[RMDB]
RNA sequence: GGGAACGACUCGAGUAGAGUCGAAAAUUACGGCAAGUAUAACAAUCGCAAUUCGGGUCAAGCGGUGUAAAAUCGCGCGCAUAUUUGGCGUUUUUAAUGACGACGCGACCUUCGCUUGUCAUCACUGACUUUAAUCUAUCUUCGGAUAGAUUAAAGUAAAAGAAACAACAACAACAAC
Reactivity to DMS in 0.01 (KOAc 150mM, MgCl2 10mM, bicine 150mM(pH8.5), 24C), signal-to-noise 9, nucleotides 027 to 126: u010u000a080c100g010g000c040a030a040g010u000a050u010a100a120c200a120a140u010c050g010c050a110a150u010u010c110g010g010g000u010c050a060a120g020c010g010g010u000g010u010a060a050a100a050u010c020g010c010g010c060g010c090a070u010a100u000u000u000g010g010c020g000u000u010u000u010u010a060a110u000g000a040c020g010a080c140g010c010g000a060c140c110u000u000c090g010c020u000u000g000u000c020a060u010c130a100c150u000g000
Reactivity to 2A3 in 0.01 (KOAc 150mM, MgCl2 10mM, bicine 150mM(pH8.5), 24C), signal-to-noise 8, nucleotides 027 to 126: u080u040a040c040g010g000c030a000a030g020u030a100u040a210a050c060a070a070u050c020g000c060a020a060u190u100c070g130g010g040u030c030a060a010g000c010g000g020u040g030u070a120a180a020a030u030c000g000c010g000c000g000c050a020u080a180u200u130u190g090g000c000g000u010u000u000u040u180a110a090u070g030a020c040g000a020c050g010c010g010a030c010c000u100u120c050g000c000u010u030g020u000c010a020u080c030a050c050u080g070